[RMDB]
RNA sequence: GGGAACGACUCGAGUAGAGUCGAAAACGCUGAGGCGCUUCCCUCCUGCGGAGAGCUGCUUCUUCUUGUUCUCGAGGGCCUUCCUUCUUCGGUGAUCCUGCCUCUCCUUGUCGGUGAAUCCUCCCCUGAACGGGGGUCUUCGGACCCCCGAAAAGAAACAACAACAACAAC
Reactivity to DMS in 0.01 (KOAc 150mM, MgCl2 10mM, bicine 150mM(pH8.5), 24C), signal-to-noise 1, nucleotides 027 to 129: c090g040c040u040g030a100g060g000c010g030c060u000u050c040c030c000u030c140c030u030g050c200g030g020a110g040a000g050c070u010g080c060u050u000c070u020u000c000u000u050g020u000u020c030u000c070g000a150g010g050g050c050c100u010u050c040c020u100u000c060u030u030c060g010g000u020g000a140u050c040c030u030g000c040c000u000c000u010c000c030u000u000g010u000c090g000g000u000g070a100a140u000c000c000u000c020c010c030c060u000g000a130a110
Reactivity to 2A3 in 0.01 (KOAc 150mM, MgCl2 10mM, bicine 150mM(pH8.5), 24C), signal-to-noise 3, nucleotides 027 to 129: c040g000c010u040g000a080g110g000c030g020c020u040u030c020c000c020u020c010c060u150g090c070g050g000a090g000a020g090c080u070g000c020u070u040c000u000u000c040u080u110g070u060u000c000u000c020g050a110g000g030g030c000c000u040u020c010c000u030u050c000u030u040c050g060g010u040g030a080u060c000c030u030g020c000c000u040c010u010c010c010u020u050g030u050c030g160g040u050g080a000a050u040c000c010u010c000c000c000c000u010g040a080a040